[RMDB]
Structure probing data (2A3 and DMS) for a 177-nucleotide construct.

RNA sequence: GGGAACGACUCGAGUAGAGUCGAAAAAAAAAGAUAUGGAAUAAGCGUUGAAACCACGAACACUUUGAUCAGAGCUCGGAAACGAGCUCUGGGAGUGUCGUGGUGGAGCUUAUUCCUAAGUCAAAAAGUUAUCAACUUAGUUCGCUAAGUUGAUAACAAAAGAAACAACAACAACAAC
Reactivity to 2A3 in 0.01 (KOAc 150mM, MgCl2 10mM, bicine 150mM(pH8.5), 24C), signal-to-noise 2, nucleotides 027 to 126: a090a000a000a030a000g110a050u140a060u190g000g010a000a010u000a020a010g010c030g180u300u070g040a010a020a000c000c000a000c000g130a300a010c040a010c030u160u170u190g140a180u300c000a000g000a000g010c000u000c010g000g040a050a090a090c010g000a000g030c000u000c000u000g000g010g000a010g020u000g000u010c000g000u010g000g010u000g000g000a010g000c000u000u000a010u000u000c000c010u000a000a000g030u020c030a180a030a140a000a070
Reactivity to DMS in 0.01 (KOAc 150mM, MgCl2 10mM, bicine 150mM(pH8.5), 24C), signal-to-noise 3, nucleotides 027 to 126: a040a060a120a110a070g000a030u000a300u010g010g000a000a010u000a010a000g000c000g000u000u010g000a230a110a020c000c000a010c000g000a070a030c010a000c010u000u010u000g010a140u010c000a000g000a010g000c000u000c010g000g000a080a060a140c000g020a010g020c000u000c010u000g010g010g010a010g010u000g000u000c010g020u010g000g000u000g000g010a090g000c000u000u010a000u000u010c010c000u000a010a060g000u010c040a060a080a090a090a140
For 2A3, 4,115 sequencing reads were counted.
The reactions ran in a buffer of 150 mM KOAc, 10 mM MgCl2 and 150 mM bicine (pH 8.5), at 24 C.